[RMDB]
RNA sequence: GGGAACGACUCGAGUAGAGUCGAAAAGAGUUUGGAGAGAUUAGGACGGUAGGGAUAGGUGGUGAACCUUGGUUCGUGGGGAAAGAUGUGGCAGAGGUGUUGGGAUAUGCCGAAACUGCCAACAUAAAUUUAUAAUAACGUUCGCGUUAUUAUAAAUAAAAGAAACAACAACAACAAC
Reactivity to 2A3 in 0.01 (KOAc 150mM, MgCl2 10mM, bicine 150mM(pH8.5), 24C), signal-to-noise 9, nucleotides 027 to 126: g080a020g010u080u130u120g040g010a050g000a020g000a080u070u150a110g040g020a040c070g010g040u120a050g040g020g020a070u090a070g040g030u070g000g020u080g020a020a030c010c000u080u170g120g010u050u060c030g020u080g010g010g000g040a040a130a040g090a040u070g010u030g030g000c010a000g020a020g020g030u050g040u060u050g040g010g020a070u080a030u200g020c010c000g020a080a040a010c010u010g000c010c000a040a020c010a070u150a070a160
Reactivity to DMS in 0.01 (KOAc 150mM, MgCl2 10mM, bicine 150mM(pH8.5), 24C), signal-to-noise 9, nucleotides 027 to 126: g000a100g020u020u020u000g010g000a130g000a120g000a140u020u020a100g010g000a110c120g000g010u020a080g010g000g000a140u020a070g000g010u010g000g010u020g010a050a040c040c030u020u020g020g010u000u010c050g020u020g010g000g010g000a070a060a070g000a050u010g010u000g000g010c010a010g020a100g000g020u000g010u000u000g010g020g000a110u020a040u010g000c010c010g000a050a080a110c020u000g010c010c010a020a040c050a030u010a040a060
An RNA of 177 nucleotides, treated with 2A3 and DMS and read out base by base. Source: RMDB libraries RFM100 and RFMREP, as collected in RNAgym. The RNA was probed in 150 mM KOAc, 10 mM MgCl2 and 150 mM bicine (pH 8.5) at 24 C.